[RMDB]
RNA sequence: GGGAACGACUCGAGUAGAGUCGAAAAUCAGUUCACUUCGGUGAACUGAAAAAUGGCAGCUAUGAGCUAAAGUGUCAUAGCAAAAGAUCGAAAGAUCAAAAAAAACCAUGGACUUCGGUCCAUGGAACUUCUCAACAAUGUUCGCAUUGUUGAGAAGAAAAGAAACAACAACAACAAC
Reactivity to 2A3 in 0.01 (KOAc 150mM, MgCl2 10mM, bicine 150mM(pH8.5), 24C), signal-to-noise 2, nucleotides 027 to 126: u020c010a000g000u000u000c010a000c000u030u060c180g120g000u000g000a000a000c000u000g000a000a010a000a000a030u110g030g000c000a000g000c000u000a000u010g000a010g000c000u160a300a030a080g190u210g000u120c010a010u000a010g000c000a000a070a020a070g000a010u000c010g050a050a070a000g000a000u000c000a050a050a030a000a000a000a040a040c000c000a000u000g000g000a000c000u030u030c230g090g000u000c000c000a000u010g000g010a000a020
Reactivity to DMS in 0.01 (KOAc 150mM, MgCl2 10mM, bicine 150mM(pH8.5), 24C), signal-to-noise 2, nucleotides 027 to 126: u000c000a030g000u010u000c000a010c000u000u000c200g040g000u000g000a000a000c000u000g000a000a010a060a110a110u000g000g040c000a230g020c000u000a010u000g000a000g000c000u000a050a100a170g020u000g020u010c000a000u000a000g000c000a150a100a090a060g010a000u000c000g010a060a130a230g020a020u000c000a010a010a000a080a080a070a110a120c010c000a000u010g000g010a020c000u000u020c170g020g010u000c000c000a000u000g000g000a020a010
The data come from the RNA Mapping Database (RMDB), library M2PK50. This 177-nucleotide RNA was probed chemically with 2A3 and DMS. DMS adducts were read by reverse transcription with MarathonRT. Reactivities are given for positions 27 through 126. 2A3 adducts were read by reverse transcription with SuperScript II with manganese. The reactions ran in a buffer of 150 mM KOAc, 10 mM MgCl2 and 150 mM bicine (pH 8.5), at 24 C.